The record gives the reactivity of an RNA of 177 nucleotides to 2A3. The RNA was probed in 150 mM KOAc, 10 mM MgCl2 and 150 mM bicine (pH 8.5) at 24 C. The 2A3 profile rests on 881 reads.
RNA sequence: GGGAACGACUCGAGUAGAGUCGAAAAACCUCUCACAUCCAGGGAAACCCCACCCUGGCGCUCACUCUUAGUAACACUUCCUAGUAGGUAUUAGGUGGUAAGCCGAGCUCUUCCUCGGUCUUGUUCUGCUAACGCUCAAUUUCGAUUGAGCGUUAGCAAAAGAAACAACAACAACAAC
Reactivity to 2A3 in 0.01 (KOAc 150mM, MgCl2 10mM, bicine 150mM(pH8.5), 24C), signal-to-noise 2, nucleotides 027 to 126: a000c000c050u030c000u050c000a080c000a170u000c010c020a020g020g000g010a070a080a200c000c000c000c000a070c020c000c010u010g000g000c000g010c040u020c000a030c040u030c000u110u150a000g000u060a050a000c010a000c030u040u020c010c010u040a040g010u030a060g240g120u140a120u090u030a120g000g030u020g000g050u070a000a010g000c000c000g010a010g030c010u010c030u190u100c000c020u000c030g000g030u010c010u000u060g030u010u090c060u000